Record summary
Structure probing data (2A3 and DMS) for a 177-nucleotide construct. It was measured as part of the RMDB library OK1LIB.
[RMDB]
RNA sequence: GGGAACGACUCGAGUAGAGUCGAAAAAUAUGAACAAGCAAUAAGAUUAAUAGAAAAUAAUGAGGAUUUCGCAUUUGCUACAAUAACGUCUCAUUCAGGUUCAACACCACGUGAAACUGGAGCAAUGGAGUCAGGUAAUGUUCGCAUUACCUGACUCAAAAGAAACAACAACAACAAC
Reactivity to 2A3 in 0.01 (KOAc 150mM, MgCl2 10mM, bicine 150mM(pH8.5), 24C), signal-to-noise 2, nucleotides 027 to 126: a010u170a040u100g020a070a030c040a080a020g060c020a040a060u080a190a000g020a140u110u130a150a110u210a120g130a000a110a020a000u230a010a110u100g000a070g100g070a070u170u000u000c000g000c110a050u000u000u130g000c030u000a040c060a090a100u200a080a050c130g040u000c000u000c030a000u020u020c000a010g030g000u080u030c020a030a080c040a010c010c020a060c050g050u020g050a010a010a010c000u040g000g020a080g000c010a040a100u080g100
Reactivity to DMS in 0.01 (KOAc 150mM, MgCl2 10mM, bicine 150mM(pH8.5), 24C), signal-to-noise 1, nucleotides 027 to 126: a020u040a030u000g000a080a000c090a100a040g030c050a110a000u120a010a120g000a060u000u000a000a210u000a070g040a000a090a000a060u040a020a040u050g000a030g000g000a200u040u040u000c050g000c040a060u000u000u000g000c000u010a150c120a200a070u010a120a120c200g000u000c000u000c000a030u020u070c030a100g000g000u030u000c010a090a140c050a060c010c180a090c120g000u000g000a000a020a010c100u000g040g000a020g000c300a060a050u000g000

The RNA was probed in 150 mM KOAc, 10 mM MgCl2 and 150 mM bicine (pH 8.5) at 24 C. For DMS, 952 sequencing reads were counted.